[RMDB]
RNA sequence: GGGAACGACUCGAGUAGAGUCGAAAAGAAGUCACUGAUGGCUUAGAAUGGGAGAUAUUGUCAGGUCGAAUCUGAUAAAUGAUUCAUAAGCCCUAGUUUGUUGCAUCAUUUCAUUCUACCGACAAACAGUUCAACAGAUAUUCGUAUCUGUUGAACUAAAAGAAACAACAACAACAAC
Reactivity to 2A3 in 0.01 (KOAc 150mM, MgCl2 10mM, bicine 150mM(pH8.5), 24C), signal-to-noise 7, nucleotides 027 to 126: g060a010a000g030u040c020a020c180u150g040a090u150g110g000c010u010u010a020g060a060a030u060g060g020g000a080g010a050u090a070u110u100g020u040c050a040g000g020u050c050g060a010a030u060c060u040g010a020u110a070a070a040u090g020a020u040u030c000a030u060a110a050g020c000c020c030u060a110g050u050u080u100g160u080u080g020c020a020u010c020a030u030u040u030c010a020u020u000c010u020a040c000c010g040a030c070a020a080a000c020
Reactivity to DMS in 0.01 (KOAc 150mM, MgCl2 10mM, bicine 150mM(pH8.5), 24C), signal-to-noise 7, nucleotides 027 to 126: g000a040a040g020u000c030a080c150u010g030a120u010g000g000c030u010u000a040g010a080a050u000g000g000g010a130g000a070u020a060u010u010g010u010c030a030g000g010u010c290g000a070a100u030c060u000g000a080u010a030a040a060u010g010a060u010u000c030a070u000a040a080g020c040c100c100u010a060g010u020u000u010g010u000u000g000c080a040u010c040a060u000u000u000c050a050u000u010c020u010a090c040c010g010a050c150a060a070a060c160

Structure probing data (2A3 and DMS) for a 177-nucleotide construct.
DMS adducts were read by reverse transcription with MarathonRT.
2A3 is a SHAPE reagent: it acylates the 2'-hydroxyl of flexible nucleotides of all four kinds.